[RMDB]
RNA sequence: GGGAACGACUCGAGUAGAGUCGAAAAAUUGUAUGUAGACCCUAAGUAUCAAGUCAUUGUCUUAAAAGACAAUGUACUUUCUUCUAUGCUUAGAUUGCACACCGUUGAGUCAGGUGAUAUUAACGUUACGCUCUGUCCUUCGGGACAGAGAAAAGAAACAACAACAACAAC
Reactivity to DMS in 0.01 (KOAc 150mM, MgCl2 10mM, bicine 150mM(pH8.5), 24C), signal-to-noise 4, nucleotides 027 to 129: a080u030u030g020u040a090u020g060u040a060g020a060c090c090c020u000a020a080g030u020a050u000c130a070a000g030u010c050a070u000u030g040u080c010u010u130a020a030a030a020g000a030c010a060a010u040g000u050a030c010u000u010u030c000u030u040c130u060a070u030g020c030u000u000a060g000a100u030u050g050c000a060c170a100c090c000g030u040u030g000a000g000u030c000a000g050g040u030g050a040u000a030u010u030a090a050c120g020u030u020a090c200g010
Reactivity to 2A3 in 0.01 (KOAc 150mM, MgCl2 10mM, bicine 150mM(pH8.5), 24C), signal-to-noise 5, nucleotides 027 to 129: a000u110u060g070u050a100u050g040u010a070g110a120c000c000c000u000a000a000g000u000a010u090c120a010a000g000u000c020a000u000u000g000u020c000u040u150a090a090a040a010g000a000c000a000a000u030g010u010a000c010u020u060u020c070u110u000c060u060a060u120g020c000u010u010a030g000a050u050u200g020c030a010c000a020c030c030g040u000u110g070a070g130u030c020a020g010g050u050g020a040u040a060u150u120a050a040c070g020u030u080a070c070g000